[RMDB]
RNA sequence: GGGAACGACUCGAGUAGAGUCGAAAAGAUAUGGAUGCCCCUUGGGAGCUUGGAUUUAUACAGGACCGUAUGUCGGAAACGACAUACUAGUACUGUAUUGUCAGCUCAUAAGGGGCAUCCUAAGUCACAUAGGUUCAAGGUUCGCCUUGAACCUAUGAAAAGAAACAACAACAACAAC
Reactivity to 2A3 in 0.01 (KOAc 150mM, MgCl2 10mM, bicine 150mM(pH8.5), 24C), signal-to-noise 2, nucleotides 027 to 126: g000a030u090a030u160g020g000a000u000g000c050c000c000c030u010u030g110g060g000a020g020c060u240u280g260g000a130u300u300u120a020u060a020c030a000g000g040a000c000c030g000u010a010u010g000u000c000g020g050a100a090a040c000g010a030c010a020u000a000c010u020a000g000u000a010c000u000g000u010a000u020u010g000u020c010a010g010c000u000c000a000u050a000a000g010g060g020g010c000a000u040c000c000u000a010a000g000u000c000a000
Reactivity to DMS in 0.01 (KOAc 150mM, MgCl2 10mM, bicine 150mM(pH8.5), 24C), signal-to-noise 3, nucleotides 027 to 126: g000a040u020a300u000g000g000a000u000g000c000c010c000c010u010u000g010g000g020a010g020c010u000u010g030g030a010u010u000u000a010u010a010c020a000g000g000a090c300c270g000u010a000u000g010u000c000g000g000a130a090a250c000g020a020c000a000u000a000c000u000a060g000u000a060c000u000g010u010a000u000u000g010u000c010a020g000c000u000c000a050u000a010a020g020g010g010g030c000a000u000c010c000u000a020a080g010u000c030a290